[RMDB]
RNA sequence: GGGAACGACUCGAGUAGAGUCGAAAAAGGAUUCCCCUAGUAACGGCGAGUGAAGCGGGAAGAGCUCAAGCUUAAAAUCUCCGUGCAAGUUUUGCGCGGCGAAUUGUAGUCUAUAGAGGCGUGAUCACUCUACUUCAUGGUUCGCCAUGAAGUAGAGAAAAGAAACAACAACAACAAC
Reactivity to DMS in 0.01 (KOAc 150mM, MgCl2 10mM, bicine 150mM(pH8.5), 24C), signal-to-noise 6, nucleotides 027 to 126: a080g010g010a190u010u000c000c000c010c080u000a060g010u030a070a040c060g000g030c120g010a180g000u010g000a150a190g010c300g000g010g000a050a050g010a140g000c030u000c080a080a060g000c050u010u000a040a030a060a090u000c000u000c000c000g000u000g020c000a010a080g050u000u020u040u010g000c000g010c000g000g000c050g000a020a080u010u000g000u010a040g000u020c040u000a090u020a090g010a040g010g010c070g000u000g000a110u040c030a160
Reactivity to 2A3 in 0.01 (KOAc 150mM, MgCl2 10mM, bicine 150mM(pH8.5), 24C), signal-to-noise 6, nucleotides 027 to 126: a000g090g000a050u030u030c010c000c000c000u020a030g030u060a080a020c020g090g000c100g040a040g040u040g080a090a010g210c040g000g000g000a040a010g020a020g000c000u030c070a050a030g010c020u080u080a010a050a020a100u060c010u000c000c000g000u010g010c000a120a260g070u170u210u270u080g000c010g000c010g020g000c000g000a010a020u030u040g050u040a060g010u010c030u030a110u060a120g080a020g020g050c050g030u060g030a030u050c020a020